[RMDB]
RNA sequence: GGGAACGACUCGAGUAGAGUCGAAAAAUGGCUAGAGUGACUAGACCCGUAACAUUACCAUAUAUCAUUUGAACUGAAAUUUGUUUGUUCUGAGGAUUAUUUUUCAAGAUAUCAAAACGAAGAUAAGAACACAACUCUCUUUCGAGAGAGUUGUGUUAAAAGAAACAACAACAACAAC
Reactivity to 2A3 in 0.01 (KOAc 150mM, MgCl2 10mM, bicine 150mM(pH8.5), 24C), signal-to-noise 2, nucleotides 027 to 126: a000u030g040g000c000u000a000g000a000g230u100g000a150c000u000a050g000a030c000c030c000g100u050a110a000c000a080u060u090a120c000c090a040u090a000u050a040u300c010a010u000u090u300g040a090a050c060u020g040a100a160a100u060u070u040g170u000u050u120g060u040u000c050u080g060a080g000g000a000u050u000a020u050u230u000u020u060c000a030a030g020a080u070a030u160c160a130a100a000a010c090g000a020a050g000a120u060a240a000g040
Reactivity to DMS in 0.01 (KOAc 150mM, MgCl2 10mM, bicine 150mM(pH8.5), 24C), signal-to-noise 2, nucleotides 027 to 126: a040u000g010g020c040u000a060g040a300g020u060g000a130c050u000a020g000a130c010c000c040g010u050a120a070c170a070u030u030a120c040c060a070u000a090u010a050u000c030a050u000u010u050g000a030a100c110u000g000a070a010a080u020u000u000g010u000u000u030g030u000u000c020u000g020a130g000g000a060u000u030a020u000u020u000u030u000c090a080a050g000a060u040a080u000c080a060a060a040a160c130g010a040a010g000a030u000a070a090g000